[RMDB]
RNA sequence: GGGAACGACUCGAGUAGAGUCGAAAAAUUUGAACCCUUAUUUGGCUCAUUUGUCAAGGAUGUAUAAUGGGUAUGCUGGUGGAGUGGAAGUUCAGGUUCUCCUGGCAGGGAACGCGUUCACUGCCGGGUAGUGGUUUCCGUUCGCGGAAACCACUACAAAAGAAACAACAACAACAAC
Reactivity to DMS in 0.01 (KOAc 150mM, MgCl2 10mM, bicine 150mM(pH8.5), 24C), signal-to-noise 1, nucleotides 027 to 126: a120u010u000u030g000a030a140c020c020c070u030u000a170u020u000u010g030g030c010u010c150a040u000u000u010g010u000c100a070a120g010g010a070u000g020u000a050u010a060a100u010g000g000g010u000a030u000g000c030u010g010g020u000g000g020a060g020u010g020g000a060a040g000u000u000c120a040g020g010u010u000c030u000c010c000u000g010g000c000a010g000g020g000a020a020c070g020c300g000u000u010c010a030c010u000g010c000c010g000g000
This 177-nucleotide RNA was probed chemically with DMS. The RNA was probed in 150 mM KOAc, 10 mM MgCl2 and 150 mM bicine (pH 8.5) at 24 C.